[RMDB]
RNA sequence: GGGAACGACUCGAGUAGAGUCGAAAAAGAACGUACCACUUGUGAGGGUGUAACAGGGACGAUUUCCAUCAGUGCCCAGUGGUCCUGUCUCUCUUUGUUCAGCUAUGGACUCAUGAAUGGACGUCGCGCUGUGGUCCUUAUUCGUAAGGACCACAGCAAAAGAAACAACAACAACAAC
Reactivity to DMS in 0.01 (KOAc 150mM, MgCl2 10mM, bicine 150mM(pH8.5), 24C), signal-to-noise 2, nucleotides 027 to 126: a050g000a160a050c100g050u000a160c030c010a070c020u010u000g010u010g000a040g000g010g040u000g000u000a040a080c080a090g000g010g000a050c040g020a110u000u000u000c010c040a100u000c060a090g050u010g000c040c030c040a110g010u000g010g030u010c110c060u000g010u020c060u000c070u010c040u000u000u000g030u000u000c090a090g000c130u010a080u020g010g010a080c000u000c010a010u000g000a040a030u000g020g010a040c030g010u010c030g010c120
Reactivity to 2A3 in 0.01 (KOAc 150mM, MgCl2 10mM, bicine 150mM(pH8.5), 24C), signal-to-noise 2, nucleotides 027 to 126: a010g080a050a000c050g020u120a270c000c000a010c010u080u000g020u020g080a070g070g000g090u040g010u100a090a050c040a090g040g000g010a010c040g080a100u050u080u060c030c020a010u060c090a030g030u050g070c000c000c000a000g010u070g050g030u030c010c030u080g020u000c010u000c010u020c020u030u150u070g030u030u090c010a000g000c040u090a120u300g040g060a040c000u000c030a040u100g090a090a030u090g060g000a000c010g000u060c040g000c010
Structure probing data (DMS and 2A3) for a 177-nucleotide construct. Reactivities are given for positions 27 through 126.